[RMDB]
Overview: The record gives the reactivity of an RNA of 207 nucleotides to 2A3 and DMS. It was measured as part of the RMDB library OK3TST. The 2A3 profile rests on 4,436 reads.
RNA sequence: GGGAACGACUCGAGUAGAGUCGAAAAAUUGACUAAAGGAUCUGACCCUAAUUGCGUCGAUGAGGAUGGACUCACUUCUCUUCAUUACUACUGUAAACACAUAUCCGUGUUCCACGAAAGCAAUUAUUACAAGUCAAAGAGUCACACUAAGAUGCGACUUAUGGAGGAAUUUCGAUUCCUCCAUAAGAAAAGAAACAACAACAACAAC
Reactivity to 2A3 in 0.01 (KOAc 150mM, MgCl2 10mM, bicine 150mM(pH8.5), 24C), signal-to-noise 7, nucleotides 027 to 156: a000u070u030g010a010c060u170a120a070a150g120g020a120u080c050u080g100a110c010c000c010u030a040a040u020u060g020c020g030u050c080g040a060u080g030a030g010g020a050u130g060g000a040c040u030c130a090c050u090u030c030u010c000u100u030c020a070u050u080a060c080u020a020c020u070g090u120a030a090a010c030a000c020a060u120a140u220c170c100g000u000g020u040u010c040c010a050c040g070a120a040a000g010c010a010a030u030u020a010u050u130a080c060a100a010g020u050c000a040a060a060g050a010g020u070c010a030c000a010c120u050a110a060g030a110u090g040c030g030a010
Reactivity to DMS in 0.01 (KOAc 150mM, MgCl2 10mM, bicine 150mM(pH8.5), 24C), signal-to-noise 3, nucleotides 027 to 156: a120u000u020g020a100c030u000a070a060a150g020g020a080u000c060u000g020a120c040c040c050u010a060a060u000u000g010c060g030u000c040g000a080u000g010a020g000g040a080u010g030g020a080c070u000c130a070c110u000u010c030u000c010u000u000c020a080u000u010a120c070u000a120c060u000g040u000a040a000a030c010a040c060a160u000a140u010c160c090g020u010g000u000u000c040c010a050c040g000a080a090a140g020c030a030a030u000u000a060u000u000a080c020a090a060g010u000c040a040a060a130g010a060g000u000c040a030c030a070c050u010a060a120g000a170u000g010c030g010a120
The reactions ran in a buffer of 150 mM KOAc, 10 mM MgCl2 and 150 mM bicine (pH 8.5), at 24 C.